[RMDB]
RNA sequence: GGGAACGACUCGAGUAGAGUCGAAAACAACGCUAACGCUUCGGCGUUAGCGUUGGCAAUGCUUUAAGGAAAAACCGAAUAAAGAUUUCAUGUUUACGUCCAGUCAGAGCCUUCGGGCUCUGACUGGCCUAUCAAGGUAGUUCGCUACCUUGAUAGGAAAAGAAACAACAACAACAAC
Reactivity to DMS in 0.01 (KOAc 150mM, MgCl2 10mM, bicine 150mM(pH8.5), 24C), signal-to-noise 3, nucleotides 027 to 126: c000a020a010c010g000c000u000a010a020c010g030c020u000u010c230g030g010c010g020u010u000a000g000c000g000u000u000g020g010c130a070a050u000g000c040u000u000u000a070a220g000g000a080a080a080a120a140c050c050g010a110a140u010a040a030a060g000a100u000u000u000c140a080u010g010u000u010u010a080c150g000u000c000c010a010g000u000c000a010g000a000g010c000c000u010u010c190g000g000g010c000u000c000u000g000a000c000u000g000g010
Reactivity to 2A3 in 0.01 (KOAc 150mM, MgCl2 10mM, bicine 150mM(pH8.5), 24C), signal-to-noise 2, nucleotides 027 to 126: c000a000a000c000g020c010u010a000a000c000g040c030u000u100c190g090g020c000g020u010u010a000g000c010g000u020u000g000g000c030a010a140u160g010c020u070u080u110a080a040g040g080a090a100a100a100a130c020c040g060a110a070u110a120a090a020g050a090u070u140u100c100a080u140g090u070u070u060a040c020g000u000c000c000a010g000u010c000a000g000a000g020c000c000u070u150c270g040g000g040c000u000c000u000g000a020c010u000g000g000